[RMDB]
RNA sequence: GGGAACGACUCGAGUAGAGUCGAAAAACAGAGCGAAGGGGGGACGGAGAAGGCUAUGUUGGCCGGGCGACGGUUGUCCCGGUUUUAGCGUGUAGGCUGGUUUUCCAGGCAAAUCCGGAAAAAGAAAGCAUGUAUAAGGUUUCGACCUUAUACAUGCAAAAGAAACAACAACAACAAC
Reactivity to 2A3 in 0.01 (KOAc 150mM, MgCl2 10mM, bicine 150mM(pH8.5), 24C), signal-to-noise 2, nucleotides 027 to 126: a020c010a010g050a030g030c030g050a050a070g000g010g010g000g030g000a000c010g000g010a050g010a090a040g050g040c010u040a030u110g080u100u130g090g020c000c000g020g010g020c020g010a170c140g110g080u110u130g040u150c000c020c000g000g000u050u110u020u000a010g010c050g020u060g050u080a020g030g070c000u010g000g000u000u030u120u020c000c000a000g040g020c000a030a090a040u060c030c040g040g000a070a110a010a020a020g150a060a040a010
Reactivity to DMS in 0.01 (KOAc 150mM, MgCl2 10mM, bicine 150mM(pH8.5), 24C), signal-to-noise 5, nucleotides 027 to 126: a110c060a110g010a060g010c060g010a050a090g010g010g000g010g010g010a090c050g000g000a060g000a110a070g010g000c030u000a020u000g010u010u000g000g000c010c010g010g010g010c300g000a050c170g010g010u010u000g020u020c000c000c010g020g000u000u000u000u000a040g000c030g010u000g010u010a080g010g010c020u000g010g010u000u000u010u000c010c010a090g010g000c070a030a050a110u000c020c010g010g000a030a040a050a090a080g000a080a090a140